[RMDB]
RNA sequence: GGGAACGACUCGAGUAGAGUCGAAAAGGACGGUUCGCCGUCCCUCUCGGGGUCCGACGAUCGACCUGACAGCAUCGAUCUAUACUGAAGCCUCCACGGUAUAGGGAGCUGGAGGGUCGGGAGGACGGAGGCACCCUCAAUUCUGUUUCGACAGAAACUUAAGCAUUACGUUCGCGUAAUGCUUAAGAAAAGAAACAACAACAACAAC
Reactivity to DMS in 0.01 (KOAc 150mM, MgCl2 10mM, bicine 150mM(pH8.5), 24C), signal-to-noise 2, nucleotides 027 to 156: g020g040a020c010g010g000u000u010c300g000c060c000g000u000c000c010c000u000c040u010c090g020g010g040g020u000c010c020g030a140c150g030a060u000c020g020a010c020c000u000g000a300c050a030g030c040a300u000c140g000a050u020c010u000a030u000a040c030u000g000a050a090g000c030c000u000c000c020a300c070g010g000u000a010u000a030g000g000g000a040g070c010u000g000g020a300g060g020g020u000c020g010g010g010a050g020g030a050c100g000g000a040g050g030c020a080c010c010c010u000c070a090a190u000u000c040u010g000u010u000u000c230g000a070c020a040g000a010a060a200
Reactivity to 2A3 in 0.01 (KOAc 150mM, MgCl2 10mM, bicine 150mM(pH8.5), 24C), signal-to-noise 5, nucleotides 027 to 156: g010g000a010c020g010g030u080u150c270g040c090c000g000u000c000c010c000u020c000u000c020g040g000g010g020u000c010c010g020a150c010g010a150u010c010g000a010c000c010u030g060a080c030a010g020c010a020u300c040g000a000u000c000u000a000u000a000c000u030g100a210a060g020c000c000u020c000c000a010c010g020g000u000a000u000a000g010g000g000a020g000c000u010g000g060a040g020g000g010u000c000g000g010g000a000g010g000a010c010g000g010a010g000g000c000a020c000c000c010u150c100a090a230u130u030c040u050g040u050u120u110c110g090a040c020a080g120a140a060a020
This 207-nucleotide RNA was probed chemically with DMS and 2A3. The reactions ran in a buffer of 150 mM KOAc, 10 mM MgCl2 and 150 mM bicine (pH 8.5), at 24 C. 2A3 adducts were read by reverse transcription with SuperScript II with manganese. The 2A3 profile rests on 7,944 reads. Source: RMDB library RNAMAK, as collected in RNAgym.